Structure probing data (2A3 and DMS) for a 177-nucleotide construct.
DMS adducts were read by reverse transcription with MarathonRT.
The RNA was probed in 150 mM KOAc, 10 mM MgCl2 and 150 mM bicine (pH 8.5) at 24 C.
It was measured as part of the RMDB library TTRINS.
RNA sequence: GGGAACGACUCGAGUAGAGUCGAAAAGAUAUGGAUCGUCAUAGCAAUGAUGGUAGGGAGAACAUGUGAUACCAUCGGAAACGAUGGUAUCACAUGACCCUACUUGAGCUGGGACGAUCCUAAGUCAGAUUUACUUGAACUUCGGUUCAAGUAAAUCAAAAGAAACAACAACAACAAC
Reactivity to 2A3 in 0.01 (KOAc 150mM, MgCl2 10mM, bicine 150mM(pH8.5), 24C), signal-to-noise 1, nucleotides 027 to 126: g020a000u070a030u140g000g020a020u000c000g000u000c020a070u020a000g000c040a090a300u210g050a040u110g150g030u020a000g000g030g000a220g090a270a090c010a040u000g000u000g030a000u060a000c000c000a000u000c040g020g050a070a070a010c020g020a000u000g000g030u000a000u000c000a010c000a000u010g010a010c010c000c010u000a000c000u010u010g010a030g000c000u010g010g020g030a000c000g000a010u020c000c010u010a060a010g040u000c050a030
Reactivity to DMS in 0.01 (KOAc 150mM, MgCl2 10mM, bicine 150mM(pH8.5), 24C), signal-to-noise 2, nucleotides 027 to 126: g010a080u010a300u010g000g000a020u000c010g010u000c010a100u010a040g010c020a220a130u020g020a090u000g000g000u000a020g000g020g010a140g030a140a160c000a000u030g000u010g000a020u000a000c000c010a000u000c010g010g030a150a070a230c010g010a010u000g000g000u000a000u000c000a000c010a000u000g000a100c010c000c000u000a010c000u010u000g010a140g000c010u000g000g030g030a030c000g000a000u000c000c000u010a000a100g010u000c050a150
Values are in units of 0.01, from 0 to 300, in steps of 10. Reactivities are given for positions 27 through 126.